[RMDB]
RNA sequence: GGGAACGACUCGAGUAGAGUCGAAAACGCGCAGGGAUGUUUUCGAAUCUAUGUUGAUGCUCUCCCUUUGACUGAUUCACAGUUACGAGCAUUGAUUCGCAUAGAUAGGCGUCUCAAAGGGAGCGCGGUCGAGGCGAUAGUUCGCUAUCGCCUCGACAAAAGAAACAACAACAACAAC
Reactivity to 2A3 in 0.01 (KOAc 150mM, MgCl2 10mM, bicine 150mM(pH8.5), 24C), signal-to-noise 1, nucleotides 027 to 126: c030g020c000g030c020a060g030g000g000a000u000g050u050u070u100u110c080g060a070a140u000c010u000a020u050g040u120u070g120a010u030g000c000u000c000u000c040c020c000u000u030u020g010a000c010u000g020a130u130u240c200a100c030a150g030u000u050a040c090g000a000g000c000a010u000u000g140a180u250u150c020g000c030a000u020a020g000a010u020a010g030g030c010g010u010c000u000c040a090a100a000g160g080g040a110g050c000g040c000g000
Reactivity to DMS in 0.01 (KOAc 150mM, MgCl2 10mM, bicine 150mM(pH8.5), 24C), signal-to-noise 1, nucleotides 027 to 126: c030g010c020g010c110a150g020g000g060a030u010g030u000u000u030u000c100g010a090a120u000c000u000a030u000g010u010u010g020a020u010g010c000u000c020u020c110c200c100u000u010u000g000a010c010u000g000a290u000u010c270a170c070a000g070u010u010a110c290g010a020g010c000a070u000u000g000a190u000u000c220g010c040a010u000a040g000a110u000a110g010g020c060g010u000c010u000c000a010a060a050g010g010g000a070g010c020g010c000g020
Source information: The record gives the reactivity of an RNA of 177 nucleotides to 2A3 and DMS. For 2A3, 935 sequencing reads were counted. DMS adducts were read by reverse transcription with MarathonRT.